[RMDB]
Structure probing data (DMS and 2A3) for a 177-nucleotide construct. For DMS, 1,005 sequencing reads were counted. Reactivities are rounded to 0.1 and cut off at 0 and 3. Source: RMDB library TTRDEL, as collected in RNAgym. The 2A3 profile rests on 2,933 reads. DMS adducts were read by reverse transcription with MarathonRT.
RNA sequence: GGGAACGACUCGAGUAGAGUCGAAAAGAUAUGGAACCAUGGACAUGAUCGUAACACUCGGAAACGAGUGGAGAAGAUCAACAGCCCGCUGGUUCCUAAGUCAAAGCACUCACUUCGGUGAGUGCAAGAAUCUGAGAUGGUUCGCCAUCUCAGAUUCAAAAGAAACAACAACAACAAC
Reactivity to DMS in 0.01 (KOAc 150mM, MgCl2 10mM, bicine 150mM(pH8.5), 24C), signal-to-noise 2, nucleotides 027 to 126: g030a050u000a300u000g030g000a000a040c000c010a060u000g030g040a000c040a220u000g010a030u010c000g000u010a100a220c000a010c000u000c000g030g010a090a130a120c000g060a010g020u030g000g000a040g030a040a110g030a000u000c000a010a040c150a130g040c010c000c000g020c160u000g010g000u000u000c010c000u010a060a040g000u000c030a130a160a180g010c010a010c000u010c000a000c010u000u050c200g020g000u020g010a000g000u000g010c000a020a030
Reactivity to 2A3 in 0.01 (KOAc 150mM, MgCl2 10mM, bicine 150mM(pH8.5), 24C), signal-to-noise 1, nucleotides 027 to 126: g030a010u080a030u130g000g000a000a000c010c020a040u180g010g000a030c080a210u170g000a000u000c000g000u030a050a000c010a020c010u000c020g000g000a080a110a020c030g010a010g010u000g020g010a020g000a000a020g000a000u000c000a000a030c040a010g060c020c010c000g100c030u000g000g000u000u020c010c000u010a120a000g030u000c050a070a100a060g000c000a000c010u020c010a010c000u040u130c300g130g020u000g000a010g000u000g000c010a010a010